[RMDB]
RNA sequence: GGGAACGACUCGAGUAGAGUCGAAAAACCGGCGGUAAAUCAACUCAGUUGAAAGCCGCGAGCGCUUUGGGUGCGAACUCAAAGGACAGCAGAACCGGUGUAAUUCCGGGGCCGACGGUUAGAGUCCAAAAGAGGUUAUCGUUCGCGAUAACCUCAAGUAUGACAAUUUGUUCGCAAAUUGUCAUACAAAAGAAACAACAACAACAAC
Reactivity to 2A3 in 0.01 (KOAc 150mM, MgCl2 10mM, bicine 150mM(pH8.5), 24C), signal-to-noise 2, nucleotides 027 to 156: a000c030c010g040g020c020g020g010u050a130a120a220u080c030a010a050c080u120c300a170g000u030u000g030a080a110a000g020c020c020g000c040g020a020g020c030g000c010u040u000u000g000g000g020u040g070c080g030a110a020c000u000c030a000a000a000g030g070a090c020a040g010c000a010g030a050a020c010c000g010g000u020g010u050a080a100u100u000c000c010g000g000g000g030c030c000g020a020c000g010g000u010u040a040g010a020g150u010c010c020a010a050a030a090g010a000g000g000u010u000a000u000c000g020u030u070c270g000c000g110a000u000a000a000c000c000u000c000a000a000
Reactivity to DMS in 0.01 (KOAc 150mM, MgCl2 10mM, bicine 150mM(pH8.5), 24C), signal-to-noise 1, nucleotides 027 to 156: a040c000c000g000g030c000g020g020u000a030a120a140u010c070a040a130c010u020c070a150g070u000u000g010a090a090a200g000c000c010g010c010g020a160g070c010g020c000u000u000u000g010g020g000u000g030c300g000a250a010c020u000c000a010a050a000g000g000a150c000a200g020c010a170g050a110a130c010c030g000g020u010g000u000a070a300u000u000c000c030g000g000g000g030c010c000g000a040c000g020g000u000u000a200g000a150g010u000c010c050a090a050a140a230g000a000g020g010u000u000a010u000c000g030u000u030c300g050c080g040a020u000a000a000c010c000u000c000a010a080

The record gives the reactivity of an RNA of 207 nucleotides to 2A3 and DMS. It was measured as part of the RMDB library M2RFPK. Reactivities are given for positions 27 through 156. The DMS profile rests on 1,580 reads.